[RMDB]
RNA sequence: GGGAACGACUCGAGUAGAGUCGAAAAUCCCCAUAGUUCGCUAUGGGGAAAAGCCGUACCGCGUAGCACGCGGAUAGGAGCGAAGAUAUCCACGGCACGCGUAAACCUUCGCCUUCGGGCGAAGGAACUUAUGGCACUUGUUCGCAAGUGCCAUAAGAAAAGAAACAACAACAACAAC
Reactivity to DMS in 0.01 (KOAc 150mM, MgCl2 10mM, bicine 150mM(pH8.5), 24C), signal-to-noise 2, nucleotides 027 to 126: u000c010c000c020c000a000u010a000g010u000u010c210g010c010u010a000u000g000g010g020g000a000a010a020a050g010c010c020g020u000a090c250c000g020c000g000u000a100g010c010a150c000g030c000g010g000a030u000a000g000g010a170g020c160g000a110a090g020a110u000a020u000c010c010a020c000g010g020c000a010c020g000c010g000u000a050a060a180c000c010u000u000c000g020c000c000u000u010c180g020g000g030c000g000a000a010g010g000a030a030
Reactivity to 2A3 in 0.01 (KOAc 150mM, MgCl2 10mM, bicine 150mM(pH8.5), 24C), signal-to-noise 3, nucleotides 027 to 126: u010c000c000c000c000a000u000a000g040u040u050c220g010c070u010a010u000g000g000g000g000a010a020a040a020g070c020c020g050u110a090c050c010g010c000g010u030a060g030c040a100c280g010c010g000g000a000u010a020g060g010a070g070c100g110a070a030g020a180u050a020u000c000c000a000c000g010g000c000a000c000g010c000g020u040a040a100a100c000c000u000u000c000g010c000c020u030u130c240g080g010g000c000g000a000a000g010g010a010a000
Chemical mapping of a 177-nucleotide RNA with DMS and 2A3. The data come from the RNA Mapping Database (RMDB), library M2PK50. 2A3 adducts were read by reverse transcription with SuperScript II with manganese. Values cover nucleotides 27 to 126. The DMS profile rests on 2,130 reads.